An RNA of 207 nucleotides, treated with 2A3 and DMS and read out base by base. For 2A3, 1,877 sequencing reads were counted. 2A3 is a SHAPE reagent: it acylates the 2'-hydroxyl of flexible nucleotides of all four kinds. For 2A3 the reverse transcriptase was SuperScript II with manganese. For DMS the reverse transcriptase was MarathonRT.
[RMDB]
RNA sequence: GGGAACGACUCGAGUAGAGUCGAAAAUGACGGCAAGUUUCAACCGAACAAGCCGAAGUCUUUGCUUAAAUGCGGAGAUUCAGAGACUAAACGAAGAUGGGGACGCCAAAAUAUAGGCGUCUUUUCUGAUAUAGUCCGACUUAUAGCUGGAAGGCUAGUGAUAAGACUAGUUCGCUAGUCUUAUCACAAAAGAAACAACAACAACAAC
Reactivity to 2A3 in 0.01 (KOAc 150mM, MgCl2 10mM, bicine 150mM(pH8.5), 24C), signal-to-noise 3, nucleotides 027 to 156: u090g010a030c030g000g000c030a080a070g010u000u050u050c100a140a080c070c070g020a020a010c030a090a030g000c010c010g000a000a000g000u000c010u030u030u010g000c010u070u110a140a120a130u250g010c010g030g000a010g010a030u110u060c050a050g090a000g000a050c020u030a020a150a030c070g080a050a040g050a070u130g000g080g000g050a000c000g000c010c030a000a050a210a050u300a100u160a110g010g000c000g000u000c000u010u000u000u000c000u010g020a020u010a010u020a090g040u000c000c000g010a000c030u130u130a040u030a120g020c020u050g070g040a040a030g040g000c000u010a040
Reactivity to DMS in 0.01 (KOAc 150mM, MgCl2 10mM, bicine 150mM(pH8.5), 24C), signal-to-noise 1, nucleotides 027 to 156: u010g000a210c040g020g060c000a170a300g000u000u000u020c020a040a070c080c050g000a250a090c070a070a300g030c000c000g000a180a100g040u000c010u000u020u000g030c020u010u000a070a080a110u020g010c010g030g000a000g000a010u000u010c010a070g000a270g000a000c010u000a020a070a160c130g020a150a020g010a070u000g000g070g010g000a000c020g010c000c010a130a140a080a210u010a230u000a090g000g020c000g020u000c010u000u000u010u000c000u000g000a270u010a110u030a030g020u000c010c020g020a040c060u010u010a120u010a090g000c030u000g010g000a020a100g000g010c020u000a190